An RNA of 177 nucleotides, treated with DMS and 2A3 and read out base by base.
RNA sequence: GGGAACGACUCGAGUAGAGUCGAAAACGGGUGAAGAUGUGAGUGUGUAGAGUUGGUGCGAUGCAUGGAAGUUAAUGACGAGUGCGAGUAGUUAGCUAUGAGUAUGAGUUGUUGAUGGAAGUGGGCGCAUGAAACUUUAGUUCGCUAAAGUUUCAUGAAAAGAAACAACAACAACAAC
Reactivity to DMS in 0.01 (KOAc 150mM, MgCl2 10mM, bicine 150mM(pH8.5), 24C), signal-to-noise 9, nucleotides 027 to 126: c110g000g000g020u000g000a070a040g010a080u010g010u000g010a070g010u010g010u010g020u010a080g010a080g020u000u000g010g020u000g010c050g010a080u010g010c050a040u000g010g010a140a110g000u000u010a040a030u010g010a030c030g000a240g020u000g010c020g000a180g010u000a030g000u010u020a090g020c020u000a020u000g000a230g010u010a030u010g010a240g000u000u000g010u000u000g000a060u000g000g010a090a110g000u000g000g000g010c180g000
Reactivity to 2A3 in 0.01 (KOAc 150mM, MgCl2 10mM, bicine 150mM(pH8.5), 24C), signal-to-noise 9, nucleotides 027 to 126: c030g020g010g030u060g050a060a030g030a070u090g040u030g050a070g030u080g010u020g030u100a040g020a040g090u050u070g040g010u040g020c020g030a040u070g040c030a020u030g030g040a050a040g020u040u080a060a030u080g030a010c030g010a010g020u030g010c010g010a010g010u020a000g010u040u160a050g040c010u010a010u080g020a020g020u050a030u080g060a060g020u010u010g010u010u010g020a050u030g020g010a060a070g020u040g010g040g000c040g000
Values cover nucleotides 27 to 126. For DMS the reverse transcriptase was MarathonRT. 2A3 adducts were read by reverse transcription with SuperScript II with manganese. 2A3 is a SHAPE reagent: it acylates the 2'-hydroxyl of flexible nucleotides of all four kinds.